[RMDB]
The data come from the RNA Mapping Database (RMDB), library RFM100. This 177-nucleotide RNA was probed chemically with DMS and 2A3. The 2A3 profile rests on 2,203 reads.
RNA sequence: GGGAACGACUCGAGUAGAGUCGAAAAAACCGCCCAUCCCAAUACUGUAGUACUUCGGUAUCGCAGCCCUCCGCCGCGCCCCGCCCGAACGCUGCGGUGGUCGCCCACUCGUGCAGGUAACUCACGACGAGCGCAUUAUAUUCGUAUAAUGCGCUCGAAAAGAAACAACAACAACAAC
Reactivity to DMS in 0.01 (KOAc 150mM, MgCl2 10mM, bicine 150mM(pH8.5), 24C), signal-to-noise 2, nucleotides 027 to 126: a060a090c140c040g040c020c000c030a210u000c010c000c010a130a020u040a090c050u010g020u010a090g030u020a050c010u010u040c090g000g020u010a030u000c070g010c030a050g000c070c000c000u000c020c040g000c030c020g000c090g030c040c010c030c050g000c000c000c000g010a090a080c130g010c060u000g040c040g000g000u000g000g000u000c040g000c040c010c020a090c140u000c030g000u010g020c090a000g010g000u000a090a080c040u000c010a050c030g000a120
Reactivity to 2A3 in 0.01 (KOAc 150mM, MgCl2 10mM, bicine 150mM(pH8.5), 24C), signal-to-noise 3, nucleotides 027 to 126: a000a000c040c010g020c000c000c000a040u030c000c010c000a070a100u130a080c040u100g060u170a080g010u020a100c020u040u080c140g060g000u040a040u130c090g040c040a020g020c010c000c000u030c010c000g010c010c010g040c000g000c000c000c000c000g010c000c000c000g060a040a010c030g010c050u050g000c030g040g020u040g000g010u020c020g010c000c020c010a020c000u040c020g000u000g010c050a010g060g020u090a090a060c000u030c030a000c010g080a030
The DMS profile rests on 3,238 reads. The reactions ran in a buffer of 150 mM KOAc, 10 mM MgCl2 and 150 mM bicine (pH 8.5), at 24 C.